[RMDB]
RNA sequence: GGGAACGACUCGAGUAGAGUCGAAAAGAAAGAACUUUCUGAUGUUGGUGAUACUGCAUCAGGAACUGAUUGGAUGAUAUUCAGGAGCCAUCAGUUCCUGAUGCACUCCCAUCAGCAUCGAAAGAAAUGAGAGUUCGUAGUUCGCUACGAACUCUCAAAAAGAAACAACAACAACAAC
Reactivity to 2A3 in 0.01 (KOAc 150mM, MgCl2 10mM, bicine 150mM(pH8.5), 24C), signal-to-noise 3, nucleotides 027 to 126: g120a010a100a000g080a030a080c000u040u000u000c070u190g000a000u000g010u000u020g040g000u010g010a010u020a090c020u000g000c000a000u000c000a010g000g020a000a000c000u000g010a030u130u250g020g030a060u080g030a020u060a130u300u190c100a080g260g050a010g130c000c000a010u010c000a000g000u010u000c000c000u000g000a000u000g000c000a000c000u010c000c000c000a000u000c000a000g000c000a000u000c000g000a000a010a000g050a010a040a070
Reactivity to DMS in 0.01 (KOAc 150mM, MgCl2 10mM, bicine 150mM(pH8.5), 24C), signal-to-noise 1, nucleotides 027 to 126: g000a030a110a080g040a050a020c000u000u010u000c000u100g010a000u000g000u000u050g030g000u000g000a020u000a300c300u000g000c030a000u000c000a010g000g000a040a000c000u020g000a050u020u050g020g000a060u000g010a150u000a080u080u050c290a040g000g000a090g000c030c000a000u010c040a000g000u000u000c000c000u000g000a000u000g000c000a000c000u000c300c100c000a000u000c000a060g000c010a000u000c000g000a000a050a000g020a040a170a020